[RMDB]
RNA sequence: GGGAACGACUCGAGUAGAGUCGAAAAGCAAUCUUCGGAUUGCCCACGUGGGGUCUCCGACAGGAUUGGGAGCGAGGAUCAUACUGAAGCCUCCACGGUAUGGGAGCUCACCUCGAUUCGGAGACGGAGGCACCCUGACUCGGCGCUUCGGCGCCAAACUGAAAAUCCAAUUCGUUGGAUUUUCAGUAAAAGAAACAACAACAACAAC
Reactivity to 2A3 in 0.01 (KOAc 150mM, MgCl2 10mM, bicine 150mM(pH8.5), 24C), signal-to-noise 3, nucleotides 027 to 156: g010c000a010a000u010c010u060u110c280g130g010a010u000u010g000c010c010c010a090c100g100u120g000g000g000g020u010c000u000c000c020g030a040c040a030g040g000a090u170u270g060g040g010a050g010c020g010a130g030g000a030u030c000a010u000a010c010u030g080a190a050g070c020c030u040c030c040a010c010g010g000u000a010u010g010g000g020a040g070c010u000c010a240c000c010u070c090g060a110u060u060c020g070g080a110g030a100c000g000g000a000g000g020c010a170c000c020c010u030g040a100c050u050c130g000g030c000g010c030u100u120c190g100g000c010g000c000c000a030a030
Reactivity to DMS in 0.01 (KOAc 150mM, MgCl2 10mM, bicine 150mM(pH8.5), 24C), signal-to-noise 1, nucleotides 027 to 156: g010c000a030a000u000c000u010u020c300g010g010a010u000u000g030c000c020c070a070c110g010u010g000g010g010g000u000c050u000c010c030g030a090c070a210g000g000a160u000u010g010g000g010a090g050c040g020a080g040g010a300u010c010a020u010a040c030u000g030a080a120g090c080c030u000c010c070a260c030g010g000u000a230u000g050g000g050a280g030c040u000c040a140c030c000u000c010g030a130u010u000c040g020g000a140g000a110c040g060g000a030g140g040c020a070c000c000c000u000g010a100c160u000c090g000g030c020g050c000u000u010c250g030g000c000g000c000c000a010a040